RNA sequence: GGGAACGACUCGAGUAGAGUCGAAAACCUAUCCUUAGUUCGGAUUGAGGGCUGGAACUCGCCCUCAUGAAGAUGGAAUCCGUAGUAAUCGCAUUUCAAAACAGUGCGGUGAAUACGUCCCUGCUCCUUAAACUAGAUAAUUCGUUAUCUAGUUUAAAAAAGAAACAACAACAACAAC
Reactivity to 2A3 in 0.01 (KOAc 150mM, MgCl2 10mM, bicine 150mM(pH8.5), 24C), signal-to-noise 9, nucleotides 027 to 126: c010c000u020a090u110c020c020u200u190a100g100u130u040c010g010g000a010u000u010g010a000g020g020g010c060u110g060g140a160a090c050u060c140g000c000c000c000u000c000a000u000g000a000a010g010a000u020g010g020a040a050u050c060c020g010u020a010g010u040a020a010u000c000g000c010a020u010u060u120c210a140a110a060a070c080a030g010u000g010c000g000g010u000g000a020a030u030a010c010g050u040c020c000c010u060g030c020u050c020c020
Reactivity to DMS in 0.01 (KOAc 150mM, MgCl2 10mM, bicine 150mM(pH8.5), 24C), signal-to-noise 9, nucleotides 027 to 126: c010c020u010a080u010c030c030u020u020a130g020u010u000c020g010g000a130u000u000g010a020g010g000g020c010u010g020g020a140a130c230u020c160g000c000c000c000u000c000a000u000g000a300a140g000a050u010g000g010a090a090u020c130c020g000u000a020g000u010a170a010u000c000g000c010a010u000u000u010c100a120a090a110a130c300a020g010u000g010c010g000g000u000g000a140a210u000a010c020g000u000c010c010c010u000g010c050u000c110c060